[RMDB]
Annotation:
Structure probing data (DMS and 2A3) for a 207-nucleotide construct. The reactions ran in a buffer of 150 mM KOAc, 10 mM MgCl2 and 150 mM bicine (pH 8.5), at 24 C. Source: RMDB library VIROID, as collected in RNAgym. For 2A3, 3,204 sequencing reads were counted. For 2A3 the reverse transcriptase was SuperScript II with manganese.
RNA sequence: GGGAACGACUCGAGUAGAGUCGAAAAGCAGUCCUCAGUACUCUUACUCUUUUCUGUAAAGAGGAGACUGCUGGACCCGCCGCCCAAGUUCGAGCAUGAGCCAAUUCCGAACGAAGAGACGCGGGAGGAAGGAUCAGCGCCCGAGAGGGAGUGGACGGUACAUCAUACAGUUCGCUGUAUGAUGUACAAAAGAAACAACAACAACAAC
Reactivity to DMS in 0.01 (KOAc 150mM, MgCl2 10mM, bicine 150mM(pH8.5), 24C), signal-to-noise 2, nucleotides 027 to 156: g020c000a060g030u010c020c060u000c020a170g000u010a180c020u010c030u000u000a150c010u010c020u020u000u020u000c130u020g020u020a050a020a070g010a050g000g010a070g000a010c030u000g020c060u000g000g000a300c030c000c020g040c010c020g000c000c000c000a110a280g020u000u010c010g020a080g020c010a140u000g000a080g000c010c000a080a290u000u000c000c030g000a300a300c030g000a150a140g020a280g000a180c300g000c030g020g000g010a300g000g040a160a130g010g020a060u000c020a120g010c180g040c000c000c010g000a120g010a250g000g000g010a130g010u010g010g020a040c100g020
Reactivity to 2A3 in 0.01 (KOAc 150mM, MgCl2 10mM, bicine 150mM(pH8.5), 24C), signal-to-noise 5, nucleotides 027 to 156: g010c020a000g010u020c050c030u040c050a070g080u170a240c040u010c020u090u080a140c010u030c040u110u230u290u120c170u210g160u210a090a090a030g000a000g030g010a010g000a010c000u000g010c020u000g000g000a010c000c020c020g000c010c010g000c010c010c020a100a070g090u020u030c010g020a000g000c030a050u030g010a030g060c050c080a130a240u070u000c020c000g010a020a020c010g010a070a030g070a020g020a160c110g010c020g060g000g010a010g020g010a020a000g020g000a040u010c000a010g080c000g000c150c010c000g020a030g030a030g020g010g030a080g070u290g060g040a050c060g060